Conditions: 150 mM KOAc, 10 mM MgCl2 and 150 mM bicine (pH 8.5), 24 C. Structure probing data (2A3 and DMS) for a 177-nucleotide construct. Source: RMDB library TTRDES, as collected in RNAgym. Values cover nucleotides 27 to 126.
RNA sequence: GGGAACGACUCGAGUAGAGUCGAAAAGAUAUGGACCAUCCCUUCUUUUGACGGAAUGGUAUCGGAAACGAUACCCAUUCCGAUAAGAAGGAUGGUCCUAAGUCAAAUCCGCUGCUUCGGCAGCGGACUCGGUGAGUAACUUCGGUUACUCACCGAGAAAAGAAACAACAACAACAAC
Reactivity to 2A3 in 0.01 (KOAc 150mM, MgCl2 10mM, bicine 150mM(pH8.5), 24C), signal-to-noise 1, nucleotides 027 to 126: g020a010u050a050u130g000g000a030c000c000a010u130c130c070c000u000u000c040u070u160u140u230g260a170c050g010g030a000a030u020g030g000u000a000u000c000g000g010a050a070a020c010g010a000u020a010c010c000c000a010u000u030c000c000g000a000u050a020a000g000a000a000g010g010a000u000g000g000u000c000c000u010a000a000g010u010c010a000a000a200u000c000c000g000c010u010g000c010u060u110c300g260g000c010a000g000c030g010g000a010
Reactivity to DMS in 0.01 (KOAc 150mM, MgCl2 10mM, bicine 150mM(pH8.5), 24C), signal-to-noise 2, nucleotides 027 to 126: g010a060u020a300u010g000g020a000c000c000a010u000c130c060c050u000u000c010u000u000u010u010g070a280c210g020g010a020a000u010g000g000u010a000u000c010g000g000a070a100a170c000g040a000u000a000c100c060c120a000u000u000c010c000g030a070u000a030a000g020a030a000g000g010a020u000g020g030u010c000c000u000a010a100g010u020c030a080a210a230u010c000c000g010c000u000g010c010u000u030c240g020g010c000a000g000c020g010g000a010